[RMDB]
RNA sequence: GGGAACGACUCGAGUAGAGUCGAAAAGGGCCCAGUCGUGGGUAGGAACCGUGGGAAGGUCAGUAACAACGCUAGCCGGCGCGCAACCGAGAAGCCGCGACCGUAGCGGUCGGCCAGCAGCGACGGCUCGAAUCUGCACCUUCGGGUGCAGAUUCGAAAAAGAAACAACAACAACAAC
Reactivity to DMS in 0.01 (KOAc 150mM, MgCl2 10mM, bicine 150mM(pH8.5), 24C), signal-to-noise 1, nucleotides 027 to 126: g000g040g000c010c010c000a110g040u000c120g030u000g000g000g010u000a030g070g000a100a100c070c100g010u010g000g020g010a090a120g010g010u010c010a130g010u030a060a050c130a020a140c150g000c230u000a080g010c060c000g010g040c010g010c010g000c030a140a120c010c040g000a190g000a100a240g000c010c020g010c010g010a080c130c250g010u000a120g000c020g010g000u000c010g000g010c040c020a120g000c070a190g000c010g010a020c020g010g000c000
Chemical mapping of a 177-nucleotide RNA with DMS.
Conditions: 150 mM KOAc, 10 mM MgCl2 and 150 mM bicine (pH 8.5), 24 C.
The DMS profile rests on 607 reads.